[RMDB]
RNA sequence: GGGAACGACUCGAGUAGAGUCGAAAAGAUAUGGACUACCCACCGUAUGACCCACUGGUGUAUUCGGAAACGAAUACGAGAGGUGCAUACGAGGUCCUAAGUCGAGACUCCGGGUUCGCCCGGAGAAGUUAAUUUACGUCUUCGGACGUAAAUUAACAAAAGAAACAACAACAACAAC
Reactivity to 2A3 in 0.01 (KOAc 150mM, MgCl2 10mM, bicine 150mM(pH8.5), 24C), signal-to-noise 2, nucleotides 027 to 126: g000a010u110a090u170g010g000a020c000u180a200c040c080c000a020c000c040g020u010a010u060g130a220c030c020c020a110c130u130g260g090u240g190u080a000u010u000c000g030g020a060a070a060c010g010a000a000u020a020c020g010a010g020a010g010g040u130g060c000a010u000a000c000g020a020g000g000u010c000c020u050a260a050g110u080c040g000a040g050a160c010u000c000c000g000g030g000u060u040c250g070c050c010c010g070g000a000g000a010a000
Reactivity to DMS in 0.01 (KOAc 150mM, MgCl2 10mM, bicine 150mM(pH8.5), 24C), signal-to-noise 4, nucleotides 027 to 126: g000a060u010a260u000g000g010a050c030u010a110c010c020c020a300c160c000g000u000a010u000g000a030c010c010c000a140c060u000g010g030u020g020u000a010u000u010c000g020g000a050a100a160c010g010a020a010u000a000c010g010a050g010a100g010g000u000g000c010a010u000a020c010g000a110g010g010u000c000c000u010a070a140g000u000c030g000a190g010a210c000u000c000c000g010g010g020u000u010c210g020c010c000c000g010g000a000g000a020a060
Record summary: Structure probing data (2A3 and DMS) for a 177-nucleotide construct. The 2A3 profile rests on 3,233 reads. Reactivities are given for positions 27 through 126. Source: RMDB library TTRDEL, as collected in RNAgym. Values are in units of 0.01, from 0 to 300, in steps of 10. 2A3 adducts were read by reverse transcription with SuperScript II with manganese.